This 177-nucleotide RNA was probed chemically with DMS and 2A3. For 2A3, 3,064 sequencing reads were counted. The DMS profile rests on 1,432 reads.
RNA sequence: GGGAACGACUCGAGUAGAGUCGAAAAGGAGUUAAGUUCGCUUAACUCCCACUACCGAGAUUGCGACUCGGUAUAUCGCAAUAACCCUUGGAAACAAGGGAACCACUGACGACUUCGGUCGUCAGAACAGAGUUGUUAACUUCGGUUAACAACUCUGAAAAGAAACAACAACAACAAC
Reactivity to DMS in 0.01 (KOAc 150mM, MgCl2 10mM, bicine 150mM(pH8.5), 24C), signal-to-noise 2, nucleotides 027 to 126: g000g040a020g000u010u000a000a020g000u000u010c180g010c000u010u000a000a000c000u000c000c000c050a150c140u000a180c070c000g020a000g000a170u010u000g000c060g010a080c000u000c010g010g010u030a010u000a110u010c030g000c040a030a040u020a140a220c000c000c000u010u010g010g010a140a140a190c000a000a000g030g010g000a050a020c200c140a230c000u000g000a000c000g000a030c000u000u010c090g000g000u000c000g000u010c000a000g000a040a140
Reactivity to 2A3 in 0.01 (KOAc 150mM, MgCl2 10mM, bicine 150mM(pH8.5), 24C), signal-to-noise 2, nucleotides 027 to 126: g000g000a000g000u000u000a000a010g010u030u080c140g010c120u010u010a000a000c000u000c010c000c000a060c020u100a070c000c030g010a010g020a090u030u120g030c050g030a020c010u000c030g000g000u010a020u040a010u010c010g010c050a010a060u070a150a200c000c010c000u010u000g030g020a020a070a030c010a010a000g000g010g030a000a040c020c010a020c030u010g010a000c000g000a000c010u040u020c230g070g000u010c000g000u010c000a000g000a000a000
The RNA was probed in 150 mM KOAc, 10 mM MgCl2 and 150 mM bicine (pH 8.5) at 24 C.